[RMDB]
RNA sequence: GGGAACGACUCGAGUAGAGUCGAAAAUGUUUUAUUCCAUUCAAAAUUAGAGCUUUAUGUCUUGAGAAUUCUCGUAAUCACUUAAAUGAGCCUGAAUGCCUCUUCUGUCUCUGAAUGUGAAAUACCUAAUGAAGGGCAGCUUACAUAUGCCUUCCUAAGCGUAGCAUUUAUUCGUAAAUGCUACGCUAAAAGAAACAACAACAACAAC
Reactivity to DMS in 0.01 (KOAc 150mM, MgCl2 10mM, bicine 150mM(pH8.5), 24C), signal-to-noise 2, nucleotides 027 to 156: u000g000u020u010u000u000a140u030u010c020c020a130u010u010c050a050a140a070a180u000u010a080g010a090g010c100u000u000u000a060u010g000u000c060u010u020g000a130g010a180a070u000u010c010u000c020g000u000a100a110u000c030a060c050u000u000a070a090a110u010g010a030g020c000c020u020g020a050a060u010g000c090c020u000c020u000u000c020u000g000u010c010u000c020u000g010a040a050u000g020u010g000a030a060a110u000a050c030c020u000a050a100u000g030a100a070g010g010g000c040a030g010c100u000u000a100c130a080u000a110u000g000c010c030u020u000c010c030u000a180
Reactivity to 2A3 in 0.01 (KOAc 150mM, MgCl2 10mM, bicine 150mM(pH8.5), 24C), signal-to-noise 3, nucleotides 027 to 156: u070g030u000u120u020u090a060u050u050c010c010a040u050u050c030a070a110a110a140u120u050a070g010a020g010c020u120u060u150a080u230g080u070c030u050u130g040a080g040a090a090u120u010c030u020c040g040u090a040a070u040c020a040c170u100u080a090a070a080u180g010a000g020c010c010u030g010a050a030u080g060c020c000u030c000u050u000c030u030g120u020c010u020c020u090g030a060a040u020g080u020g020a060a010a000u070a060c050c000u070a060a070u120g070a070a080g010g070g000c010a000g000c020u110u080a060c020a050u150a040u110g010c000c000u070u140c010c070u110a120